[RMDB]
RNA sequence: GGGAACGACUCGAGUAGAGUCGAAAAGUCUGUGCGUUUCCAUUUGAGUAUCCUGAAAACGGGCUUUUCAGCAUGGAACGUACAUAUUAAAUAGUAGGAGUGCAUAGUGGCCCGUAUAGCAGGCACUGAGGCGAGGAUUGUUUCGACAAUCCUCGAAACUCAUUUGUGGGUUCGCCCACAAAUGAGUAAAAGAAACAACAACAACAAC
Reactivity to DMS in 0.01 (KOAc 150mM, MgCl2 10mM, bicine 150mM(pH8.5), 24C), signal-to-noise 1, nucleotides 027 to 156: g000u000c050u010g030u000g010c000g000u000u000u000c000c000a060u000u000u000g000a240g030u010a070u000c060c000u010g010a070a040a120a110c040g040g050g010c070u000u000u020u010c010a150g050c140a020u000g010g030a050a030c010g040u010a070c030a020u000a050u000u010a070a130a100u010a120g010u010a080g020g050a140g020u010g040c040a120u010a130g010u000g030g030c020c010c020g020u000a050u000a160g050c070a030g000g000c030a060c000u000g010a140g010g010c010g050a010g040g010a030u000u000g030u000u010u040c300g010a120c010a030a010u000c000c010u010c000g000a010a080
Reactivity to 2A3 in 0.01 (KOAc 150mM, MgCl2 10mM, bicine 150mM(pH8.5), 24C), signal-to-noise 2, nucleotides 027 to 156: g080u020c050u010g030u030g010c020g000u010u220u010c040c020a060u150u010u050g030a020g030u130a020u160c000c010u020g040a040a000a070a130c040g030g070g000c050u100u090u060u050c050a030g000c050a000u020g010g010a030a000c000g000u030a000c000a000u010a000u000u110a080a100a070u100a050g090u010a040g000g130a030g050u040g000c040a030u060a230g090u030g080g030c020c000c000g010u010a010u050a120g040c060a000g000g050c000a020c010u040g020a050g080g110c050g000a000g000g010a000u000u020g020u030u110u100c060g000a010c000a000a000u010c010c000u000c000g000a020a000

Record summary
This 207-nucleotide RNA was probed chemically with DMS and 2A3. Conditions: 150 mM KOAc, 10 mM MgCl2 and 150 mM bicine (pH 8.5), 24 C. For DMS, 2,029 sequencing reads were counted. Source: RMDB library M2RFPK, as collected in RNAgym.